[RMDB]
RNA sequence: GGGAACGACUCGAGUAGAGUCGAAAACAGGAGCGUCAAGGCAGACAGACUCUGGAAGUUGUAAGGAUGAGGACAGUUAGAGAUGACAGCAGGUACUCAUUGCUGGCAGGAAUCAGGCAUCAGAUCCAUGCCUUCUUCUUUGCUUACAUGUAAGAUACGCUUUUAGUAAUUUCGAUUACUAAAAGCGAAAAGAAACAACAACAACAAC
Reactivity to DMS in 0.01 (KOAc 150mM, MgCl2 10mM, bicine 150mM(pH8.5), 24C), signal-to-noise 3, nucleotides 027 to 156: c070a080g010g000a040g040c060g040u000c060a080a110g000g050c110a110g000a130c080a110g010a060c030u000c020u000g020g010a090a160g000u010u000g040u000a090a130g000g020a100u010g010a070g000g010a090c070a060g020u000u000a070g010a140g010a140u000g000a080c040a050g010c030a060g000g000u000a090c090u000c050a100u000u010g030c010u000g000g000c010a080g000g000a030a070u000c050a000g000g010c010a040u000c030a160g030a100u000c100c090a080u000g040c000c010u000u000c040u000u000c010u000u000u000g020c000u000u010a050c060a050u010g010u000a040a100g010a140u000a190
Reactivity to 2A3 in 0.01 (KOAc 150mM, MgCl2 10mM, bicine 150mM(pH8.5), 24C), signal-to-noise 8, nucleotides 027 to 156: c060a040g060g010a020g030c030g040u040c060a040a060g070g040c010a010g040a020c030a020g050a070c030u030c040u090g070g040a060a040g010u140u080g030u080a040a020g020g010a030u050g020a040g000g040a020c020a030g020u080u120a030g020a010g020a100u090g040a020c010a020g030c020a020g070g020u050a070c020u040c080a060u020u120g030c030u020g040g000c000a010g000g050a030a030u060c020a010g020g010c000a010u030c040a050g070a150u060c070c020a010u030g000c000c000u010u000c010u020u010c000u100u190u110g030c010u060u050a040c030a060u150g050u140a040a030g030a130u130a080